RNA sequence: GGGAACGACUCGAGUAGAGUCGAAAAGAUAUGGAACGAUGAUAGGGAGAUCCGGAUCGGAAACGAUCCGUGAUCAUCGAUCUAUAUCGUUCCUAAGUCAAAGCUAUAUACGUUCGCGUAUAUAGCACACCUACGGUUACUUCGGUAACCGUAGGUGAAAAGAAACAACAACAACAAC
Reactivity to DMS in 0.01 (KOAc 150mM, MgCl2 10mM, bicine 150mM(pH8.5), 24C), signal-to-noise 1, nucleotides 027 to 126: g010a010u000a090u010g000g010a010a040c000g020a030u000g010a080u010a010g030g000g000a150g010a000u000c000c000g000g010a010u010c000g000g010a020a020a050c000g010a000u000c000c000g000u000g030a000u000c000a130u000c190g000a090u010c000u010a000u000a030u000c000g020u000u000c000c010u000a040a040g000u010c050a140a130a120g010c010u010a000u000a000u000a010c000g020u000u030c300g010c000g060u000a000u000a000u000a000g030c000a090
Reactivity to 2A3 in 0.01 (KOAc 150mM, MgCl2 10mM, bicine 150mM(pH8.5), 24C), signal-to-noise 1, nucleotides 027 to 126: g000a010u030a010u040g000g000a000a020c040g010a000u180g140a000u100a010g070g120g050a300g030a040u000c000c000g000g010a000u010c020g020g000a020a000a000c010g000a000u030c010c000g000u070g010a000u000c010a000u090c080g030a010u050c000u010a000u000a000u050c010g020u000u000c020c000u000a000a000g030u010c030a230a050a060g010c000u000a010u000a000u000a010c020g010u020u100c300g040c000g180u010a000u000a000u000a020g000c000a000